[RMDB]
RNA sequence: GGGAACGACUCGAGUAGAGUCGAAAACGAUAUGCAUUGAUAUGUUAUGAUCUUCUUUAAUGCGUAUUAGUAUGCUAGAAGAUCGCUCUAUUGUACCAUAUUACAAUAGAGCGGGCAUGUAGCAUAAGGUAGAUGUUGAUUUCGAUCGACGUCUACCAAAAGAAACAACAACAACAAC
Reactivity to 2A3 in 0.01 (KOAc 150mM, MgCl2 10mM, bicine 150mM(pH8.5), 24C), signal-to-noise 9, nucleotides 027 to 126: c030g010a020u010a010u040g010c010a010u010u060g060a020u050a030u120g080u090u090a230u300g090a070u030c020u060u000c000u020u180u080a030a010u020g000c000g000u010a020u020u030a060g120u010a010u010g000c000u010a010g010a050a010g010a070u020c000g000c000u000c000u000a000u000u000g010u010a030c040c120a160u100a120u300u050a060c000a000a000u000a000g000a000g000c000g000g000g000c020a010u040g030u060a000g000c000a000u010a050a060
Reactivity to DMS in 0.01 (KOAc 150mM, MgCl2 10mM, bicine 150mM(pH8.5), 24C), signal-to-noise 9, nucleotides 027 to 126: c040g010a050u010a010u000g000c000a050u010u010g010a080u020a020u010g000u010u010a110u020g010a050u010c030u000u000c030u010u020u020a050a010u000g000c000g020u010a020u010u010a100g020u000a010u000g000c030u000a160g000a050a060g010a020u000c000g000c000u000c000u000a000u000u000g000u000a020c300c250a150u040a100u060u000a000c000a000a010u000a000g000a010g000c010g000g000g000c020a040u010g010u000a020g000c000a010u010a030a170
Chemical mapping of a 177-nucleotide RNA with 2A3 and DMS.
Reactivities are given for positions 27 through 126.
For 2A3, 217,787 sequencing reads were counted.
Conditions: 150 mM KOAc, 10 mM MgCl2 and 150 mM bicine (pH 8.5), 24 C.
It was measured as part of the RMDB library OK1LIB.